RNA sequence: GGGAACGACUCGAGUAGAGUCGAAAAUCGUUUAUGUGCGACAUGAACGAAGUGCAUACUGUCCUACAGUAUGCAGAUGGCUUCUGUAGGACAGAGGCCAGAGCUAAUCUGUCGCACAGAUUAGCGAGGACAGCUAUGUAUUCGUACAUAGCUGUCCAAAAGAAACAACAACAACAAC
Reactivity to 2A3 in 0.01 (KOAc 150mM, MgCl2 10mM, bicine 150mM(pH8.5), 24C), signal-to-noise 5, nucleotides 027 to 126: u040c000g000u000u010u010a030u000g010u000g110c030g030a010c020a020u080g020a080a020c030g020a100a030g070u050g050c000a010u040a020c000u000g000u060c000c030u020a010c000a010g010u020a010u040g000c000a000g090a140u100g150g000c000u000u000c000u000g010u030a060g040g060a020c000a000g000a000g000g000c000c010a020g010a000g020c000u010a020a030u000c000u000g010u020c030g000c010a010c000a010g000a020u040u040a000g010c010g010a040
Reactivity to DMS in 0.01 (KOAc 150mM, MgCl2 10mM, bicine 150mM(pH8.5), 24C), signal-to-noise 6, nucleotides 027 to 126: u010c000g010u010u000u000a060u010g010u000g010c060g000a050c000a010u000g010a010a070c040g010a080a120g000u000g020c010a050u000a010c010u000g000u000c060c050u000a110c000a010g010u000a000u010g010c000a060g000a110u010g000g010c010u000u000c010u000g000u000a060g000g010a300c010a010g000a020g010g000c010c040a080g000a190g000c060u010a070a050u000c010u000g000u000c100g000c050a270c000a010g000a080u000u000a020g010c000g000a090